[RMDB]
RNA sequence: GGGAACGACUCGAGUAGAGUCGAAAACAACAGACGAUUCGUCGUCUGUUGAAAAAACCUUUGUGCCUCCCUCGCUUUGAUCUCGUAUUCCCAUUGGGAAUGACGAGGGAGCGACCAGGCACUCUGGUAAAAAUUGUCGGACUUCGGUCCGACAAAACGGAAACAAUUGUUUCGACAAUUGUUUCCGAAAAGAAACAACAACAACAAC
Reactivity to DMS in 0.01 (KOAc 150mM, MgCl2 10mM, bicine 150mM(pH8.5), 24C), signal-to-noise 1, nucleotides 027 to 156: c000a000a020c000a020g000a010c010g000a040u010u000c260g000u010c020g010u010c000u000g030u020u020g000a000a020a090a070a100a060c000c000u000u000u000g010u000g010c010c020u000c100c010c030u000c000g090c010u000u000u000g000a110u010c010u000c020g020u000a150u010u000c000c000c000a300u000u020g070g010g020a040a010u000g010a010c010g040a030g010g000g010a020g040c030g020a040c050c020a050g020g020c030a020c000u000c020u000g030g020u000a070a080a130a150a160u000u000g000u000c040g010g020a070c000u010u000c300g070g010u010c000c000g000a010c000a060a010a070a220
Reactivity to 2A3 in 0.01 (KOAc 150mM, MgCl2 10mM, bicine 150mM(pH8.5), 24C), signal-to-noise 3, nucleotides 027 to 156: c000a000a000c010a000g000a000c000g020a020u040u110c200g050u010c000g010u020c160u000g010u010u010g000a020a010a000a010a010a000c010c020u000u010u000g000u010g010c000c010u020c020c000c000u010c010g010c000u180u220u080g100a090u110c010u000c010g010u000a000u000u020c030c030c100a280u190u300g000g010g020a010a000u030g100a030c000g000a000g000g000g000a010g000c010g000a010c060c110a000g000g020c000a000c000u000c000u020g010g000u100a050a090a010a060a130u090u040g000u020c010g000g000a000c000u040u070c300g090g010u000c000c010g000a000c000a000a010a000a000